[RMDB]
RNA sequence: GGGAACGACUCGAGUAGAGUCGAAAACAAUGUGCUGGCGUGUGGGUCUGCCCAACACUUUGGGAUGGCUGGGAACGGCAGGCAAGAUGUCUUGGAGCUUCCUGCAGCCGGCACCGGGGUGGCACAGACAAACACUUUGGUUCGCCAAAGUGUUUGUAAAAGAAACAACAACAACAAC
Reactivity to DMS in 0.01 (KOAc 150mM, MgCl2 10mM, bicine 150mM(pH8.5), 24C), signal-to-noise 2, nucleotides 027 to 126: c060a090a080u020g010u000g020c020u000g010g000c050g010u000g030u010g010g000g010u020c080u000g020c050c000c020a050a050c080a020c040u000u010u000g000g000g010a160u030g000g020c040u000g010g010g050a100a180c090g040g020c020a030g010g020c070a030a050g000a040u000g010u010c130u020u010g020g010a170g000c020u000u000c010c000u000g000c020a080g010c010c000g000g000c030a040c010c070g020g010g000g020u010g010g030c060a080c130a130g010
Reactivity to 2A3 in 0.01 (KOAc 150mM, MgCl2 10mM, bicine 150mM(pH8.5), 24C), signal-to-noise 1, nucleotides 027 to 126: c020a010a230u160g000u020g010c010u000g000g020c110g120u050g030u020g010g070g020u060c070u080g000c020c000c000a030a020c030a030c060u080u040u030g090g060g070a110u090g140g000c050u020g010g050g090a130a080c030g060g000c000a020g070g050c010a030a010g110a100u120g040u050c040u070u050g090g040a100g030c030u040u000c000c000u000g000c000a000g020c000c000g000g000c020a000c010c010g000g010g010g000u050g070g020c030a040c020a070g080
Structure probing data (DMS and 2A3) for a 177-nucleotide construct.
It was measured as part of the RMDB library OK2TRN.
2A3 adducts were read by reverse transcription with SuperScript II with manganese.
For 2A3, 1,457 sequencing reads were counted.